The record gives the reactivity of an RNA of 207 nucleotides to 2A3.
It was measured as part of the RMDB library ARCHII.
Reactivities are rounded to 0.1 and cut off at 0 and 3.

RNA sequence: GGGAACGACUCGAGUAGAGUCGAAAAGAGUGGAGACAACAAGAUGUUGGAACUAUGGGCCGAUCUCAUUAGGCCGGGUUCGGGUUGGCUAUUCACUGGCCUGCCCAUUCCAAGUCGGGAGUUGAGGGUUCGGGCUCGAGCGAAGGCUUGUGGUUCGCUAUCGCUUCCUGUUCGCAGGAAGCGAUAGAAAAGAAACAACAACAACAAC
Reactivity to 2A3 in 0.01 (KOAc 150mM, MgCl2 10mM, bicine 150mM(pH8.5), 24C), signal-to-noise 1, nucleotides 027 to 156: g040a010g000u030g050g060a060g030a030c090a230a040c020a050a110g040a140u150g040u120u060g030g000a070a000c010u040a150u140g020g000g000c010c010g040a040u010c070u060c070a080u160u180a010g020g050c010c030g050g010g000u070u050c070g020g000g000u000u020g000g000c000u020a050u200u200c120a060c300u070g000g000c000c010u000g000c020c000c020a030u040u030c000c000a020a050g080u090c070g070g050g030a130g030u070u120g020a040g020g000g020u030u100c040g040g000g000c060u010c030g030a040g000c080g040a100a040g000g000c000u010u050g010u020g000g070u010u000c020g000